An RNA of 170 nucleotides, treated with 2A3 and DMS and read out base by base. The data come from the RNA Mapping Database (RMDB), library 15KLIB. For 2A3 the reverse transcriptase was SuperScript II with manganese. DMS adducts were read by reverse transcription with MarathonRT.
[RMDB]
RNA sequence: GGGAACGACUCGAGUAGAGUCGAAAAAAGAUCUUCACCAAGAGUGGCGUUAAUGACAUUUGUAUGUUUGAGAAUAAAACCACUUUGCCUACUAAUAUAGCUUUUGAACUCUAUGCUAAGCGUGCUGACCGGAAUGCCUUCGGGCAUUCCAAAAGAAACAACAACAACAAC
Reactivity to 2A3 in 0.01 (KOAc 150mM, MgCl2 10mM, bicine 150mM(pH8.5), 24C), signal-to-noise 3, nucleotides 027 to 129: a010a000g030a010u000c000u060u000c010a050c010c000a040a000g090a010g020u000g030g060c030g030u040u050a160a030u100g010a090c030a040u110u180u090g230u120a120u120g060u040u050u110g080a070g030a020a050u080a090a070a030a000c010c000a010c000u000u070u050g000c050c000u040a090c010u050a110a100u110a040u030a080g000c000u070u030u010u020g050a060a010c000u020c000u050a120u070g000c020u050a020a020g010c020g050u060g010c030u000g000a010c030c000
Reactivity to DMS in 0.01 (KOAc 150mM, MgCl2 10mM, bicine 150mM(pH8.5), 24C), signal-to-noise 3, nucleotides 027 to 129: a050a080g000a120u010c120u000u040c010a100c040c050a220a090g010a000g030u030g030g030c000g070u020u040a110a040u020g020a070c030a080u010u050u000g090u070a060u020g020u000u050u170g000a000g000a010a000u030a000a000a000a000c030c010a050c150u000u010u010g040c060c030u020a030c060u060a080a100u000a140u030a080g020c060u070u020u080u010g010a000a070c050u030c030u020a050u020g010c060u130a040a080g000c080g000u060g010c110u010g000a090c090c050